[RMDB]
RNA sequence: GGGAACGACUCGAGUAGAGUCGAAAAUGAACUUGUCCAAGAGUUAACAGGCUCUGAUUGCUCAGAAAGCAAUGCAGAGAUUGAGAAUUUAUCACAAGUUGAUGGUCCUCAAGUGGAAGAGCAACUAUAAUCAUAUCGUCUUCGGACGAUAUGAUUAAAAAGAAACAACAACAACAAC
Reactivity to 2A3 in 0.01 (KOAc 150mM, MgCl2 10mM, bicine 150mM(pH8.5), 24C), signal-to-noise 3, nucleotides 027 to 126: u060g000a030a020c000u020u030g040u030c050c030a090a050g060a020g080u010u030a050a030c010a040g070g040c000u000c000u000g010a010u010u010g000c010u010c060a070g240a120a110a000g000c010a010a020u160g190c000a000g000a010g000a030u020u020g000a020g010a050a040u050u030u050a100u110c050a000c010a040a010g010u030u040g070a070u060g000g030u010c010c000u060c060a060a090g100u090g110g080a060a030g030a030g030c030a040a040c050u070a030
Reactivity to DMS in 0.01 (KOAc 150mM, MgCl2 10mM, bicine 150mM(pH8.5), 24C), signal-to-noise 6, nucleotides 027 to 126: u000g000a030a020c010u000u000g010u000c090c140a100a300g000a040g010u000u010a050a080c040a030g000g000c000u000c000u000g000a050u000u000g000c000u000c090a190g010a110a180a090g000c000a000a000u000g010c000a010g010a010g000a040u010u000g000a050g010a020a020u000u000u000a080u010c180a010c020a030a020g010u010u000g000a030u010g000g010u000c000c010u000c120a060a080g020u000g000g010a050a050g000a060g000c060a050a050c090u010a130